[RMDB]
Chemical mapping of a 177-nucleotide RNA with 2A3. The reactions ran in a buffer of 150 mM KOAc, 10 mM MgCl2 and 150 mM bicine (pH 8.5), at 24 C.
RNA sequence: GGGAACGACUCGAGUAGAGUCGAAAACUCUUGAAUUACCUCUAAUUCUAGGGAUUCCUUUCUCUUUAAGUCUAAAUACAGUUCCAGUUUGUGUCCCCUCUGGCACACUAUAUUUAACUUUUCCAUCAAUCCGUCCGGUAUUCGUACCGGACGGAUUAAAAGAAACAACAACAACAAC
Reactivity to 2A3 in 0.01 (KOAc 150mM, MgCl2 10mM, bicine 150mM(pH8.5), 24C), signal-to-noise 3, nucleotides 027 to 126: c000u010c000u000u020g050a010a010u000u110a140c080c060u120c070u160a020a010u020u000c010u040a030g000g010g030a000u040u060c020c000u030u170u080c060u030c060u050u160u150a050a010g050u010c060u110a050a050a040u080a040c010a000g000u000u120c010c030a100g030u060u140u130g170u120g080u060c040c000c000c000u040c000u000g000g030c030a020c000a020c050u010a020u030a010u130u040u010a040a070c020u000u010u020u100c060c070a140u100c030